[RMDB]
RNA sequence: GGGAACGACUCGAGUAGAGUCGAAAACUGUCAGGUUCUAUAGAUGUUAACUGUUUUGCUCCUUAAGACUCUGGCACCUUCCUCCAAUUAGAUUUAUGCUAGCCCUUCAUGAUCGCAAAGAGUAAACACGCAUCUAAUUUUUCGAAAUUAGAUGCGUAAAAGAAACAACAACAACAAC
Reactivity to DMS in 0.01 (KOAc 150mM, MgCl2 10mM, bicine 150mM(pH8.5), 24C), signal-to-noise 4, nucleotides 027 to 126: c170u000g010u000c040a050g010g000u000u000c030u000a140u010a040g000a080u010g010u000u000a070a100c130u000g010u010u000u000u000g010c040u000c030c030u000u000a140a080g010a050c030u000c010u010g010g000c030a060c070c050u000u000c020c010u000c080c070a080a100u000u000a040g000a090u010u010u000a060u020g010c050u000a070g000c020c020c000u000u010c070a070u000g010a060u000c070g020c100a050a050a100g000a100g010u000a050a050a070c180
Reactivity to 2A3 in 0.01 (KOAc 150mM, MgCl2 10mM, bicine 150mM(pH8.5), 24C), signal-to-noise 3, nucleotides 027 to 126: c010u010g030u040c030a020g010g030u090u010c020u060a080u110a090g060a070u120g040u120u120a080a090c040u050g080u050u080u060u080g010c010u020c020c000u040u060a070a000g000a030c020u000c020u040g000g010c000a030c010c010u020u010c010c000u050c020c020a070a040u070u060a070g060a080u040u170u210a080u140g030c020u020a040g030c010c010c000u060u020c030a060u080g040a060u060c030g020c060a090a090a010g080a060g020u080a020a020a010c060

Record summary
The record gives the reactivity of an RNA of 177 nucleotides to DMS and 2A3. The RNA was probed in 150 mM KOAc, 10 mM MgCl2 and 150 mM bicine (pH 8.5) at 24 C.